This 177-nucleotide RNA was probed chemically with 2A3. High 2A3 reactivity points to a flexible backbone, as in loops and unpaired stretches. Source: RMDB library RFM100, as collected in RNAgym.
[RMDB]
RNA sequence: GGGAACGACUCGAGUAGAGUCGAAAAGCACGUGCCUGUGGGUGUCCGCUGGUUCUCAAAUGGUGAGAUUAACCGGUACGGUACAUGGAAUUAACCACUCCAGUCAUUCUUACGGCCAACCGAAAGACCCGGACACGAGAUUCGUCUCGUGUCCGGGAAAAGAAACAACAACAACAAC
Reactivity to 2A3 in 0.01 (KOAc 150mM, MgCl2 10mM, bicine 150mM(pH8.5), 24C), signal-to-noise 1, nucleotides 027 to 126: g030c000a030c080g030u180g000c030c000u070g000u090g000g060g000u140g000u010c030c030g000c030u010g000g000u160u000c000u010c000a050a160a300u240g060g050u180g000a000g000a010u230u170a010a010c000c000g040g030u050a010c010g000g070u090a060c010a080u000g030g030a000a050u070u010a070a020c030c000a000c000u040c010c010a050g010u090c000a040u010u010c010u020u020a030c020g000g000c000c000a040a040c000c000g100a130a100a000g030a040
Conditions: 150 mM KOAc, 10 mM MgCl2 and 150 mM bicine (pH 8.5), 24 C. The 2A3 profile rests on 514 reads.